[RMDB]
RNA sequence: GGGAACGACUCGAGUAGAGUCGAAAAAUAUUUUAAAUAAACGAGGCAUGUUGAAAUGAAUCGGUGUCCCUCAAAGCUCUAUGGCAAUCGGUGUAUCGGUGUCUUAUUUAUACCUGGACACCUAAUGGAUCCGGUAUAUAUUCGUAUAUACCGGAUCAAAAGAAACAACAACAACAAC
Reactivity to DMS in 0.01 (KOAc 150mM, MgCl2 10mM, bicine 150mM(pH8.5), 24C), signal-to-noise 3, nucleotides 027 to 126: a060u050a000u040u030u040u010a040a030a080u000a030a060a060c050g000a050g020g030c080a030u000g030u030u010g000a100a080a070u010g000a060a030u010c010g000g020u010g010u000c020c000c040u010c130a040a110a090g010c020u000c110u030a060u040g010g020c030a110a040u030c100g010g030u010g000u010a050u030c110g000g020u000g030u020c040u010u000a090u020u040u020a060u030a090c060c040u000g010g010a000c010a030c000c000u000a010a060u030g010
Reactivity to 2A3 in 0.01 (KOAc 150mM, MgCl2 10mM, bicine 150mM(pH8.5), 24C), signal-to-noise 4, nucleotides 027 to 126: a000u140a160u040u140u070u080a040a110a090u210a060a060a000c020g000a000g030g010c030a010u050g070u130u170g140a110a220a150u050g030a030a030u040c010g020g030u040g000u000c000c030c000u060c070a160a110a010g000c030u000c040u100a090u140g080g000c030a030a130u110c050g120g010u070g000u020a110u100c060g000g000u000g010u030c030u080u040a120u100u220u050a160u080a110c000c030u030g000g000a010c000a000c000c000u030a020a050u060g100
Description:
An RNA of 177 nucleotides, treated with DMS and 2A3 and read out base by base. For DMS, 7,238 sequencing reads were counted.